[RMDB]
RNA sequence: GGGAACGACUCGAGUAGAGUCGAAAAUAGCAAUAAUGAGAUUGAGCAAUAACAGGUCUGUGAUGCCCUUAGAUGCACGCGCGCUACAAUAAUAUUUCCUAGACCGAGAGGUCCGGGUAAACCGCUGCUCUGUUAAUUACUUCGGUAAUUAACAGAGAAAAGAAACAACAACAACAAC
Reactivity to 2A3 in 0.01 (KOAc 150mM, MgCl2 10mM, bicine 150mM(pH8.5), 24C), signal-to-noise 2, nucleotides 027 to 126: u060a010g010c040a020a070u120a090a100u200g030a040g030a120u080u100g020a040g030c020a030a070u050a080a040c070a050g030g040u060c010u070g080u070g050a100u070g010c010c010c000u000u060a050g000a060u070g020c030a010c030g040c010g010c020g010c020u090a030c040a020a020u090a150a030u030a130u100u030u050c000c000u000a030g000a000c000c010g000a010g000a000g070g000u000c010c040g060g000g060u070a100a050a020c040c030g010c040u020g020
Reactivity to DMS in 0.01 (KOAc 150mM, MgCl2 10mM, bicine 150mM(pH8.5), 24C), signal-to-noise 3, nucleotides 027 to 126: u010a090g010c070a090a090u020a040a080u010g000a050g020a110u010u000g020a070g020c030a050a070u020a110a080c120a010g000g010u010c040u010g010u010g010a060u000g000c040c030c060u020u000a080g010a100u010g020c080a020c090g010c070g010c050g000c010u000a030c120a050a080u010a060a110u010a180u000u010u000c000c000u000a070g010a030c000c000g000a200g000a250g000g000u000c010c030g020g010g010u000a020a060a110c090c050g000c170u000g010
An RNA of 177 nucleotides, treated with 2A3 and DMS and read out base by base. The data come from the RNA Mapping Database (RMDB), library RFMREP. The reactions ran in a buffer of 150 mM KOAc, 10 mM MgCl2 and 150 mM bicine (pH 8.5), at 24 C. DMS adducts were read by reverse transcription with MarathonRT. For 2A3, 1,668 sequencing reads were counted. The DMS profile rests on 1,760 reads. 2A3 adducts were read by reverse transcription with SuperScript II with manganese.